[RMDB]
RNA sequence: GGGAACGACUCGAGUAGAGUCGAAAACGAAGAGGAAAGAAGGACGCGAGACGCAAACCUGUGAGUGGAUCCUCGCCUUUAUUCACUGGGGACGACAACUCUGGGGAGAAAAGGGAGGAUCGGAUGGCAUCUCUAAGUUGUUCGCAACUUAGAGAUGAAAAGAAACAACAACAACAAC
Reactivity to 2A3 in 0.01 (KOAc 150mM, MgCl2 10mM, bicine 150mM(pH8.5), 24C), signal-to-noise 3, nucleotides 027 to 126: c050g020a030a020g050a020g070g020a070a010a030g050a030a030g010g010a000c010g030c030g040a050g030a030c040g000c060a080a070a070c020c020u090g040u070g110a070g050u130g040g000a010u010c000c010u020c060g300c000c010u070u030u030a090u040u050c070a070c190u020g020g000g020g000a050c100g050a060c090a130a090c030u010c010u010g010g000g020g010a030g000a010a020a000a000g000g000g000a010g010g000a000u000c000g010g020a040u050g060g000
Reactivity to DMS in 0.01 (KOAc 150mM, MgCl2 10mM, bicine 150mM(pH8.5), 24C), signal-to-noise 4, nucleotides 027 to 126: c080g020a080a080g010a080g000g010a050a070a120g010a090a060g010g020a060c080g020c070g000a060g010a100c080g020c070a080a080a130c030c040u000g010u000g010a100g020u010g010g000a060u000c020c010u000c010g000c020c000u000u000u000a120u010u000c020a070c010u000g010g000g000g000a140c130g000a080c300a080a080c010u000c000u010g000g000g000g000a030g000a070a030a020a010g010g000g000a040g000g010a000u000c020g010g000a080u010g000g000